[RMDB]
RNA sequence: GGGAACGACUCGAGUAGAGUCGAAAACCUCGGCGCGACGUCGGGCGACACCGGCAGCGCCGCCGAGUACGCGAUGCUCGGCAAGGCGCGGGUCAACGUCUUCAUGCUCUCGCCGCAGGGCCGCAUGAAAGUCAACUGCAUUCGUGCAGUUGACUUUAAAAGAAACAACAACAACAAC
Reactivity to 2A3 in 0.01 (KOAc 150mM, MgCl2 10mM, bicine 150mM(pH8.5), 24C), signal-to-noise 2, nucleotides 027 to 126: c000c010u010c010g030g000c020g000c040g000a010c020g010u030c030g000g010g010c000g010a020c030a030c070c010g250g000c050a100g000c030g010c010c000g010c000c000g010a000g000u010a020c110g040c110g300a230u090g000c000u000c010g000g020c010a150a140g000g000c010g000c000g020g000g000u040c050a180a080c050g030u000c030u080u060c060a070u070g050c050u010c010u000c000g000c000c010g000c000a000g010g000g050c040c020g120c070a030u210g160
Reactivity to DMS in 0.01 (KOAc 150mM, MgCl2 10mM, bicine 150mM(pH8.5), 24C), signal-to-noise 2, nucleotides 027 to 126: c020c010u000c000g000g000c010g030c180g000a050c050g000u000c110g000g010g000c040g010a180c300a060c060c010g040g000c010a180g000c000g030c000c020g000c000c000g000a010g030u000a010c080g040c210g020a170u000g010c000u000c000g000g000c030a060a040g030g000c000g000c000g000g000g020u000c030a060a030c030g000u000c010u000u010c070a050u000g020c120u000c010u000c030g010c010c000g000c230a040g000g000g010c010c040g000c160a080u000g010

Record summary:
Conditions: 150 mM KOAc, 10 mM MgCl2 and 150 mM bicine (pH 8.5), 24 C. Structure probing data (2A3 and DMS) for a 177-nucleotide construct. For 2A3, 1,711 sequencing reads were counted. It was measured as part of the RMDB library OK2TST.